Chemical mapping of a 177-nucleotide RNA with DMS and 2A3.
RNA sequence: GGGAACGACUCGAGUAGAGUCGAAAAGAAAGAAAGACGCAUAAAAUGCGGAUAUGGUGCUGACUUUGUGUAAGUCCGACGUAUCCUGUAUUCACGGAUACUGCCAGAUAUGGCUUUGGGAUUACAACAUUAUCGACUAUUUCGAUAGUCGAUAAUGAAAAGAAACAACAACAACAAC
Reactivity to DMS in 0.01 (KOAc 150mM, MgCl2 10mM, bicine 150mM(pH8.5), 24C), signal-to-noise 9, nucleotides 027 to 126: g010a090a100a090g010a080a090a090g000a100c020g020c020a030u020a090a070a070a300u010g010c010g000g000a080u010a060u010g010g010u000g010c060u000g000a130c070u000u010u000g010u010g010u010a030a020g030u010c000c010g000a080c020g010u000a000u000c000c000u010g020u020a100u020u020c160a070c180g000g000a020u000a000c000u000g010c000c010a050g000a130u040a110u010g000g000c000u000u020u020g000g000g000a030u000u000a020c040a060a300
Reactivity to 2A3 in 0.01 (KOAc 150mM, MgCl2 10mM, bicine 150mM(pH8.5), 24C), signal-to-noise 9, nucleotides 027 to 126: g070a010a050a010g100a020a080a010g110a010c010g010c030a010u180a150a250a080a050u110g000c010g020g020a020u050a060u140g090g020u070g030c050u040g040a110c040u050u090u080g080u030g000u040a040a100g180u000c010c010g000a010c090g000u000a000u000c000c020u060g050u130a190u130u210c090a030c090g000g000a000u000a010c000u020g000c000c000a060g050a210u230a170u180g000g000c000u110u120u080g010g000g010a000u010u020a000c010a050a010

The RNA was probed in 150 mM KOAc, 10 mM MgCl2 and 150 mM bicine (pH 8.5) at 24 C. 2A3 is a SHAPE reagent: it acylates the 2'-hydroxyl of flexible nucleotides of all four kinds. Values are in units of 0.01, from 0 to 300, in steps of 10.